The record gives the reactivity of an RNA of 177 nucleotides to 2A3 and DMS. Reactivities are given for positions 27 through 126. Reactivities are rounded to 0.1 and cut off at 0 and 3. The data come from the RNA Mapping Database (RMDB), library TTRDEL.
RNA sequence: GGGAACGACUCGAGUAGAGUCGAAAAGAUAUGGAGGUAGGGCGAUAAGACGCUGUCGGAAACGACAGGCGUCUUUUGACGCCUCUCCUCCUAAGUCAAAAGUACUCUUAGUUCGCUAAGAGUACAAGCCUAUCUAUUGGUUCGCCAAUAGAUAGGCAAAAGAAACAACAACAACAAC
Reactivity to 2A3 in 0.01 (KOAc 150mM, MgCl2 10mM, bicine 150mM(pH8.5), 24C), signal-to-noise 2, nucleotides 027 to 126: g030a010u050a010u070g010g000a000g050g030u130a030g020g000g050c030g070a140u080a300a050g000a000c000g000c010u000g020u000c000g000g010a040a030a010c010g010a010c000a000g050g080c000g000u000c000u000u000u010u010g020a010c000g000c010c010u070c010u010c000c000u000c000c000u000a030a010g010u000c010a020a040a100a080g000u000a010c000u000c000u010u000a010g030u050u050c200g030c200u000a000a010g010a000g010u000a000c000a000a000
Reactivity to DMS in 0.01 (KOAc 150mM, MgCl2 10mM, bicine 150mM(pH8.5), 24C), signal-to-noise 3, nucleotides 027 to 126: g000a020u000a210u010g000g000a000g010g020u010a130g000g000g040c000g010a170u010a030a020g010a020c000g000c000u000g020u000c000g010g000a090a030a120c000g000a010c010a030g020g020c000g020u000c000u000u000u000u000g000a190c030g010c000c000u000c080u000c000c000u000c000c000u000a010a060g000u010c030a080a070a140a160g000u000a000c000u000c000u000u000a010g000u000u020c230g020c000u000a000a000g000a010g010u000a000c000a040a060